[RMDB]
This 207-nucleotide RNA was probed chemically with 2A3 and DMS. For 2A3, 865 sequencing reads were counted. For 2A3 the reverse transcriptase was SuperScript II with manganese.
RNA sequence: GGGAACGACUCGAGUAGAGUCGAAAAAGGAUGUCAAUUCCACUCGCAGUGUCUGUUGAUAACCGUUAUCCGGCCGCCAGUGGUAUAAUAUGUAAUGGCAGACGGUACCGCCACGCGAGGUGCAGACGUUUUUAGCGAGUUCAGCGCGCCGGUUCGGCGACUACGGUUUGUUCGCAAACCGUAGUCGAAAAGAAACAACAACAACAAC
Reactivity to 2A3 in 0.01 (KOAc 150mM, MgCl2 10mM, bicine 150mM(pH8.5), 24C), signal-to-noise 2, nucleotides 027 to 156: a010g100g000a060u100g030u130c080a040a200u100u020c010c000a010c030u000c020g030c050a050g030u000g010u080c020u030g060u120u120g080a180u060a140a010c020c010g010u030u040a050u080c010c000g000g000c050c000g010c010c000a040g020u040g030g060u090a040u050a110a060u060a010u160g180u160a100a150u090g100g000c010a030g070a080c040g030g000u040a070c010c020g030c010c020a080c020g040c070g080a080g050g050u060g000c020a010g040a080c040g020u100u090u060u110u050a070g000c010g000a000g010u020u060c000a010g000c000g080c020g000c070c000g000g000u030u080c010g020g010
Reactivity to DMS in 0.01 (KOAc 150mM, MgCl2 10mM, bicine 150mM(pH8.5), 24C), signal-to-noise 2, nucleotides 027 to 156: a070g000g000a050u000g010u010c050a020a170u000u000c040c010a050c010u010c020g010c040a260g000u000g000u000c020u000g010u010u000g000a110u010a080a140c050c030g010u010u000a120u000c060c030g010g000c020c000g000c020c010a060g010u010g050g020u000a040u000a080a040u000a160u000g020u010a030a090u010g020g000c030a060g010a100c060g020g020u000a060c030c010g050c020c030a050c040g010c040g030a060g030g080u000g040c180a080g000a010c010g040u000u000u000u000u020a170g030c010g000a110g010u010u000c060a100g010c000g040c070g020c010c030g040g010u010u000c060g030g000